[RMDB]
RNA sequence: GGGAACGACUCGAGUAGAGUCGAAAAGAUAUGGAUCGAUAGACAUGCUACUUCGGAAACGAAAUCUAGCAACAGCUAUCCGAUCCUAAGUCAAACAUGGUAUUUACCUUCGGGUAAAUACCAUGAAUCCUUCCUUAGUGUUCGCACUAAGGAAGGAAAAAGAAACAACAACAACAAC
Reactivity to DMS in 0.01 (KOAc 150mM, MgCl2 10mM, bicine 150mM(pH8.5), 24C), signal-to-noise 3, nucleotides 027 to 126: g010a020u000a110u000g000g000a010u000c020g010a010u000a000g000a070c090a120u000g010c000u000a020c120u000u000c000g000g000a040a030a080c000g000a000a020a020u000c280u010a000g010c000a050a120c300a110g000c010u000a010u000c120c040g010a020u000c000c010u000a020a060g000u010c010a150a130a250c010a000u000g000g030u000a020u000u000u000a010c010c010u000u000c220g010g000g000u000a000a000a000u000a000c000c000a000u000g000a050a100
Reactivity to 2A3 in 0.01 (KOAc 150mM, MgCl2 10mM, bicine 150mM(pH8.5), 24C), signal-to-noise 2, nucleotides 027 to 126: g010a000u010a020u080g000g000a000u000c000g020a020u020a010g170a200c100a160u100g000c010u000a020c010u020u010c010g000g010a030a010a000c010g000a010a000a010u170c070u060a020g000c000a030a270c080a130g000c000u000a000u000c170c130g010a010u020c000c000u000a000a000g020u020c060a110a090a020c000a040u010g000g030u000a000u030u020u010a010c000c000u040u120c300g050g000g000u010a000a000a000u000a000c000c000a000u000g010a000a000